[RMDB]
RNA sequence: GGGAACGACUCGAGUAGAGUCGAAAACUAUGGUGGAAGCGUGAAUCACGUGGAUAGCCGCUCACAUGGUAGAGCCUCGACAAGUAAUCAAUUUGUUAAAACGGGUGAGCGGUAACGCUAUGAAGCUCAAUCGAUACCAAUUCGUUGGUAUCGAUUGAAAAGAAACAACAACAACAAC
Reactivity to 2A3 in 0.01 (KOAc 150mM, MgCl2 10mM, bicine 150mM(pH8.5), 24C), signal-to-noise 8, nucleotides 027 to 126: c050u050a060u110g030g020u030g030g050a050a020g010c000g020u050g110a260a120u250c030a030c070g020u040g030g020a020u050a080g010c000c000g000c000u000c000a010c000a060u150g070g020u150a100g050a050g150c020c030u060c050g020a020c020a030a010g060u140a140a090u130c080a050a100u030u030u030g060u070u080a100a080a040a020c020g130g000g000u000g010a000g000c000g000g010u010a030a000c010g000c010u030a040u110g120a100a020g020c020u000
Reactivity to DMS in 0.01 (KOAc 150mM, MgCl2 10mM, bicine 150mM(pH8.5), 24C), signal-to-noise 4, nucleotides 027 to 126: c030u000a050u010g000g030u000g000g000a210a110g000c030g010u000g050a190a100u020c080a070c090g000u000g010g000a130u020a120g000c020c000g000c000u010c010a020c000a070u020g000g010u030a080g010a100g000c020c060u010c080g010a020c050a010a000g010u000a110a080u040c300a040a050u010u010u000g000u000u010a050a030a110a060c090g010g000g010u000g000a000g030c010g000g010u000a010a020c050g010c010u000a060u010g010a120a080g010c090u000

Record summary
An RNA of 177 nucleotides, treated with 2A3 and DMS and read out base by base. The RNA was probed in 150 mM KOAc, 10 mM MgCl2 and 150 mM bicine (pH 8.5) at 24 C. For DMS the reverse transcriptase was MarathonRT.